[RMDB]
RNA sequence: GGGAACGACUCGAGUAGAGUCGAAAAUGGGUAAAGUUAAUACAAGGAUCUCUUAUUACCUUGGCUUAGCUUCUUAGCAUUCAGUGAUUUGGGGUUAAGAAAUCUCUGUAAUUAUUUUUUCAAGGAACACCGUGAAUAUAUUCGUAUAUUCACGGUGAAAAGAAACAACAACAACAAC
Reactivity to DMS in 0.01 (KOAc 150mM, MgCl2 10mM, bicine 150mM(pH8.5), 24C), signal-to-noise 3, nucleotides 027 to 126: u000g010g000g000u000a040a030a030g010u000u000a010a040u000a020c000a030a040g000g000a080u000c160u000c140u000u000a080u000u010a080c010c000u000u000g000g010c050u010u000a050g000c020u000u000c130u010u000a060g010c060a070u000u000c090a030g010u010g020a100u000u020u000g010g000g010g000u000u010a040a100g000a040a090a040u000c010u000c020u000g000u000a070a080u000u000a010u000u000u010u000u000u000c050a070a120g010g000a090a190
Reactivity to 2A3 in 0.01 (KOAc 150mM, MgCl2 10mM, bicine 150mM(pH8.5), 24C), signal-to-noise 2, nucleotides 027 to 126: u080g020g020g020u070a060a080a030g030u080u030a020a030u020a040c010a040a010g010g040a060u010c070u040c040u190u190a100u180u200a180c000c000u000u000g040g030c010u010u020a000g010c000u080u010c000u080u170a040g060c020a080u100u140c040a010g020u000g080a120u060u010u070g050g010g020g010u070u020a070a020g040a120a120a040u030c030u000c000u030g040u070a130a100u110u060a180u060u110u100u030u020u120c040a030a030g140g000a110a040
About this RNA
Chemical mapping of a 177-nucleotide RNA with DMS and 2A3. The 2A3 profile rests on 1,661 reads. 2A3 adducts were read by reverse transcription with SuperScript II with manganese.